[RMDB]
RNA sequence: GGGAACGACUCGAGUAGAGUCGAAAAACAACGGAUGGUUCCUAAGUGACAUCGCGGGUAUAGGUGAAGAGAUAGAAGAGAUUAAGUUGUAUAGGGUCUUUAGAACUGUCGACAACCAAGCUUUUCCAGGCAAGUACGACGAUAGCAUUAUAGAAAAAAUCGGAAUAAGGUUCGCCUUAUUCCGAUUAAAAGAAACAACAACAACAAC
Reactivity to DMS in 0.01 (KOAc 150mM, MgCl2 10mM, bicine 150mM(pH8.5), 24C), signal-to-noise 2, nucleotides 027 to 156: a060c070a120a110c040g010g020a050u000g030g010u000u010c020c020u010a100a150g040u000g010a090c020a090u000c070g020c030g010g070g010u000a050u000a030g020g010u000g000a050a100g000a120g000a130u010a050g000a070a040g040a140g000a050u000u000a060a150g010u020u010g010u010a050u000a150g030g000g010u000c010u000u000u000a110g000a070a020c060u010g010u000c030g010a050c050a030a050c040c040a070a110g040c050u010u000u010u000c090c040a120g020g010c020a060a090g030u000a100c040g000a080c030g000a060u000a050g000c020a090u000u010a110u000a160g010a010a010a090a110
Reactivity to 2A3 in 0.01 (KOAc 150mM, MgCl2 10mM, bicine 150mM(pH8.5), 24C), signal-to-noise 2, nucleotides 027 to 156: a000c030a020a010c040g080g000a020u030g010g040u020u060c020c010u050a100a060g050u040g060a000c020a020u020c040g000c030g090g000g000u040a040u050a100g000g050u070g040a040a020g010a000g000a030u090a070g010a040a000g020a010g000a010u020u130a110a020g010u020u020g040u060a070u060a070g000g020g000u000c040u020u100u010a100g020a160a050c020u030g030u050c020g000a010c000a050a020c040c010a030a040g000c010u040u050u060u020c040c010a000g000g000c020a130a000g020u030a080c010g010a000c010g030a040u020a000g030c010a000u100u090a110u300a110g140a000a060a010a080